The record gives the reactivity of an RNA of 207 nucleotides to 2A3 and DMS. Values cover nucleotides 27 to 156.
[RMDB]
RNA sequence: GGGAACGACUCGAGUAGAGUCGAAAAGGGCUUGACGCAUCGCCCGAAUAUGAUGCAUGUGCUUUUGCACUAAGAUAAAUGUCCGUAUCGUAGGGGACAUAGAACCUACUCAUUAAUGUCCGAAGAGUCUGGGACGAUCAUCAGGCCAGACUAAGAACAUGCCCUACUGAUUCGUCAGUAGGGCAUGAAAAGAAACAACAACAACAAC
Reactivity to 2A3 in 0.01 (KOAc 150mM, MgCl2 10mM, bicine 150mM(pH8.5), 24C), signal-to-noise 2, nucleotides 027 to 156: g030g000g010c030u040u110g030a050c120g010c030a000u000c000g000c000c010c000g020a070a030u150a070u060g060a010u030g000c000a040u080g000u000g030c000u090u190u160u200g050c030a010c070u100a060a050g070a090u170a100a200a070u050g030u000c040c030g010u010a060u140c000g000u000a040g000g090g000g000a040c010a000u160a000g080a050a000c000c000u040a020c020u010c020a060u010u210a220a060u050g000u050c030c010g080a110a010g000a000g100u000c030u050g000g010g010a170c010g040a020u090c010a000u040c040a010g080g000c000c000a010g020a010c000u030a090a000g070a040a030
Reactivity to DMS in 0.01 (KOAc 150mM, MgCl2 10mM, bicine 150mM(pH8.5), 24C), signal-to-noise 1, nucleotides 027 to 156: g010g030g060c000u020u010g000a060c110g020c050a070u000c040g040c010c040c040g000a070a090u010a030u000g010a060u000g000c100a130u010g030u010g000c000u000u000u000u000g000c020a070c040u000a100a050g030a040u000a000a090a100u020g000u000c030c040g080u010a090u000c160g000u000a020g010g010g050g000a080c050a050u000a040g000a020a140c080c000u000a030c000u000c030a170u000u010a130a170u000g040u000c000c020g010a090a200g010a130g100u000c010u000g010g000g000a050c030g000a090u030c060a110u000c030a020g010g010c000c000a110g040a070c030u000a030a040g010a080a240